[RMDB]
RNA sequence: GGGAACGACUCGAGUAGAGUCGAAAAAGACGAACAUGAUGAAAGCAAAAAUUAAAAAGAAUGCGUGAUCAUCAAACAUUAUGUGUUUGAUAUGAUCGAACUUGUCAUGCUACGUUCUUUCUGAUUCGUCUAAAAGGUGAUGUCUUCGGACAUCACCGAGAUUUGUAUGCUUCGGCAUACAAAUCUCAAAAGAAACAACAACAACAAC
Reactivity to DMS in 0.01 (KOAc 150mM, MgCl2 10mM, bicine 150mM(pH8.5), 24C), signal-to-noise 3, nucleotides 027 to 156: a050g020a030c010g020a020a040c020a050u030g000a030u010g020a100a110a160g000c050a040a060a110a090a140u000u000a060a070a110a110a140g010a170a120u000g030c060g020u000g000a030u000c000a080u010c020a000a030a020c000a020u000u010a090u030g070u000g010u000u010u000g010a040u010a040u000g030a020u000c010g020a040a120c090u010u000g040u000c030a040u020g010c010u000a100c030g010u000u000c020u000u000u010c030u000g000a210u010u000c020g000u000c040u000a040a040a080a090g020g020u010g020a010u000g020u000c000u000u000c300g030g000a020c010a010u000c000a000c010c000
Reactivity to 2A3 in 0.01 (KOAc 150mM, MgCl2 10mM, bicine 150mM(pH8.5), 24C), signal-to-noise 9, nucleotides 027 to 156: a010g010a000c000g010a030a000c010a040u100g020a010u060g030a080a030a020g020c040a040a060a100a070a070u190u260a140a140a080a070a010g120a100a030u090g030c050g060u090g010a000u010c000a000u000c000a000a000a000c000a010u130u220a100u300g080u030g000u010u000u000g040a040u040a100u210g000a000u010c010g010a030a040c040u050u070g030u080c020a020u040g010c010u070a070c060g070u070u040c010u010u080u000c020u010g080a220u040u010c010g020u000c070u050a040a090a060a070g000g000u000g000a000u000g000u000c000u020u090c250g070g000a000c000a000u000c000a000c000c000

Notes
This 207-nucleotide RNA was probed chemically with DMS and 2A3. The DMS profile rests on 6,494 reads. The 2A3 profile rests on 9,712 reads. The reactions ran in a buffer of 150 mM KOAc, 10 mM MgCl2 and 150 mM bicine (pH 8.5), at 24 C.